[RMDB]
RNA sequence: GGGAACGACUCGAGUAGAGUCGAAAAUCUGUCUCUCUUUUUGUGAAAUGAGCUAAUUGUUGCACCCAGGCUUGCAAAGUUGCUGUGAGGCUUAAGUGAGCUCCCACAUGGGAGGCUCAGAGUAGUGCGUCUUGAGUGGAUUCGUCCACUCAAGACGAAAAGAAACAACAACAACAAC
Reactivity to DMS in 0.01 (KOAc 150mM, MgCl2 10mM, bicine 150mM(pH8.5), 24C), signal-to-noise 1, nucleotides 027 to 126: u000c060u000g030u000c050u030c020u000c000u000u000u000u000u000g010u030g000a060a070a080u010g000a040g000c080u010a040a120u010u000g020u000u000g040c050a060c030c000c010a070g010g000c050u000u000g010c100a070a060a140g010u000u000g020c070u010g040u000g010a080g010g010c020u010u000a050a090g020u010g000a040g000c020u000c000c060c000a160c300a100u010g010g000g010a040g000g010c030u000c010a030g010a090g000u000a090g020u010g010